[RMDB]
RNA sequence: GGGAACGACUCGAGUAGAGUCGAAAAUAAAGUGGCAGGCACAGCGUGAGGCUGGCUUCACAGAGCAGCGAUCACUGCCCGCUUCCAUCGGUGGAAGGAUAACAGGCUGCUGCACCUUGGGCCCGCUUCUGGCCCAGAGUCCCUCUACAACAGACCAGAAUAAGUUGUUGUUCGCAACAACUUAUUCAAAAGAAACAACAACAACAAC
Reactivity to 2A3 in 0.01 (KOAc 150mM, MgCl2 10mM, bicine 150mM(pH8.5), 24C), signal-to-noise 5, nucleotides 027 to 156: u120a000a050a010g040u060g030g000c020a010g050g000c050a040c040a260g050c050g050u070g030a060g090g030c020u020g060g040c000u100u100c090a110c010a040g080a010g010c000a000g000c000g050a040u090c040a030c100u060g010c000c030c000g040c010u020u010c010c020a100u160c150g300g030u130g030g010a010a010g010g020a030u070a120a070c040a040g040g000c010u030g000c000u010g000c050a080c000c030u030u030g010g010g000c020c040c010g060c050u120u050c050u100g040g000c010c010c000a000g000a000g010u010c010c020c000u050c030u080a090c020a160a020c020a070g100a070c060c040a020
Reactivity to DMS in 0.01 (KOAc 150mM, MgCl2 10mM, bicine 150mM(pH8.5), 24C), signal-to-noise 2, nucleotides 027 to 156: u000a080a050a080g020u000g010g060c030a070g010g040c060a110c070a090g020c070g040u010g020a120g030g010c010u000g010g020c010u000u000c070a170c170a100g010a140g000c000a030g010c010g010a120u010c090a100c000u000g010c000c010c000g020c020u010u000c010c020a100u000c180g030g020u010g000g010a050a010g020g010a100u000a070a070c050a110g010g050c010u000g020c020u000g020c010a060c030c050u020u000g030g050g000c000c000c080g030c150u010u000c090u000g010g040c000c000c010a040g000a100g000u000c020c000c000u010c000u000a050c060a070a100c060a100g010a120c030c020a160